[RMDB]
RNA sequence: GGGAACGACUCGAGUAGAGUCGAAAAGGUGAUCGGUCGUUACCUGGAGUACAGGUGCGGAAUCGCCGGACGGAGCGAGGUGACACGGGCUCCAGAGCGGUAUCAGCUCCUGGUGGGUGUUCCACGGCAGAGCAUUCUGCUUCGGCAGAAUGCUCUGAAAAGAAACAACAACAACAAC
Reactivity to DMS in 0.01 (KOAc 150mM, MgCl2 10mM, bicine 150mM(pH8.5), 24C), signal-to-noise 2, nucleotides 027 to 126: g000g010u000g010a050u000c100g010g030u010c030g020u010u020a070c030c000u000g000g000a230g010u010a130c030a010g010g010u000g020c030g040g000a080a020u010c020g000c010c020g000g000a140c210g000g000a060g000c040g000a250g050g010u010g010a140c060a130c040g010g020g010c020u000c030c030a110g010a100g010c020g020g030u000a060u000c160a120g010c000u000c020c020u000g010g000u000g020g000g010u010g000u010u010c030c000a090c170g010g010
Reactivity to 2A3 in 0.01 (KOAc 150mM, MgCl2 10mM, bicine 150mM(pH8.5), 24C), signal-to-noise 1, nucleotides 027 to 126: g000g030u050g020a060u060c090g020g120u000c010g020u080u130a140c000c010u020g070g030a130g120u200a110c000a000g000g070u020g000c000g010g040a070a020u050c040g000c030c000g000g010a050c120g080g030a000g020c070g040a050g000g060u120g020a010c000a020c110g070g130g060c000u050c000c010a000g000a000g020c020g040g000u170a110u300c060a020g010c010u020c000c030u010g000g040u080g000g030g000u100g070u070u010c000c000a060c060g040g110

Source: RMDB library OK2TST, as collected in RNAgym. Structure probing data (DMS and 2A3) for a 177-nucleotide construct. The DMS profile rests on 1,435 reads. 2A3 adducts were read by reverse transcription with SuperScript II with manganese. As a SHAPE reagent, 2A3 marks flexible, mostly unpaired nucleotides at the ribose 2'-OH. DMS adducts were read by reverse transcription with MarathonRT.